This 177-nucleotide RNA was probed chemically with DMS and 2A3.

RNA sequence: GGGAACGACUCGAGUAGAGUCGAAAAGAUAUGGACCACCAUUGUCAGCUCUCUCGGAAACGAGGAGCUUGGAUUUAUGGUCUGGUCCUAAGUCAAACGAACCAACGGGUUCGCCCGUUGGUUCGAACCCUAUAGGUACGUUCGCGUACCUAUAGGGAAAAGAAACAACAACAACAAC
Reactivity to DMS in 0.01 (KOAc 150mM, MgCl2 10mM, bicine 150mM(pH8.5), 24C), signal-to-noise 4, nucleotides 027 to 126: g000a040u000a290u010g010g000a010c000c010a050c000c000a010u000u000g010u000c000a050g000c000u000c000u020c010u000c000g010g010a090a070a150c010g010a010g010g000a020g010c000u000u000g030g000a040u000u010u000a010u000g000g010u010c140u000g020g010u000c000c000u000a010a110g010u000c030a080a120a260c000g010a010a010c000c000a000a000c000g010g000g010u000u010c230g010c000c000c000g010u000u000g000g010u000u000c000g000a030a050
Reactivity to 2A3 in 0.01 (KOAc 150mM, MgCl2 10mM, bicine 150mM(pH8.5), 24C), signal-to-noise 1, nucleotides 027 to 126: g020a010u080a020u130g010g000a000c000c000a000c000c000a010u010u060g100u090c010a000g000c000u000c020u020c000u010c010g020g040a090a080a080c010g000a010g000g010a000g010c020u010u070g000g010a010u040u270u230a010u010g010g060u070c190u050g010g000u010c000c000u020a120a010g040u010c050a080a080a110c020g000a000a000c000c000a000a000c000g050g000g000u080u080c270g130c030c000c000g000u000u000g020g000u010u000c000g000a000a010

For 2A3, 12,781 sequencing reads were counted. For 2A3 the reverse transcriptase was SuperScript II with manganese. Source: RMDB library TTRDEL, as collected in RNAgym.